[RMDB]
RNA sequence: GGGAACGACUCGAGUAGAGUCGAAAAGGUUCAAAUUGUAGUUUAACGCCUACCAUGCCAUUUAUCAGCGUAAUAAUUGGCGAUUUAUGUUGGCAACUACUGCAUUCAUAGCCGCCUUCAACGUUAACUGUAUCGCCAUUGAACGUCAACAUUAACCGCUCUAAUAUGAUUUCGAUCAUAUUAGAGCAAAAGAAACAACAACAACAAC
Reactivity to 2A3 in 0.01 (KOAc 150mM, MgCl2 10mM, bicine 150mM(pH8.5), 24C), signal-to-noise 9, nucleotides 027 to 156: g040g010u050u100c050a020a060a110u110u080g020u020a030g020u020u070u110a110a020c080g000c010c000u020a040c020c020a040u110g000c000c010a030u040u050u030a060u050c070a050g110c030g120u100a090a030u030a040a020u050u020g000g010c010g010a020u010u110u090a140u140g020u020u060g010g000c020a060a010c030u060a010c010u020g010c020a040u010u110c040a030u100a080g010c000c020g030c030c000u050u090c050a060a050c050g030u040u090a050a040c030u040g040u110a110u090c030g010c030c020a060u050u080g050a040a000c020g060u070c040a040a050c010a110u200u290a060a040c050c090
Reactivity to DMS in 0.01 (KOAc 150mM, MgCl2 10mM, bicine 150mM(pH8.5), 24C), signal-to-noise 4, nucleotides 027 to 156: g040g010u010u000c080a060a090a140u010u000g000u000a050g000u010u010u000a060a120c070g020c020c030u000a080c080c090a150u010g010c000c020a050u000u000u000a050u000c050a170g010c140g050u000a070a080u010a040a070u010u000g030g030c010g020a150u000u000u010a110u020g020u010u010g020g030c000a090a110c030u000a050c030u010g020c060a070u020u010c090a100u000a050g030c030c010g040c010c020u000u000c030a060a050c050g010u000u000a020a060c070u010g020u010a060u000c030g030c020c050a120u010u000g010a060a040c040g020u000c040a060a070c060a100u000u000a050a080c070c090

The record gives the reactivity of an RNA of 207 nucleotides to 2A3 and DMS.
It was measured as part of the RMDB library OK3TST.
2A3 adducts were read by reverse transcription with SuperScript II with manganese.
The 2A3 profile rests on 13,934 reads.
For DMS the reverse transcriptase was MarathonRT.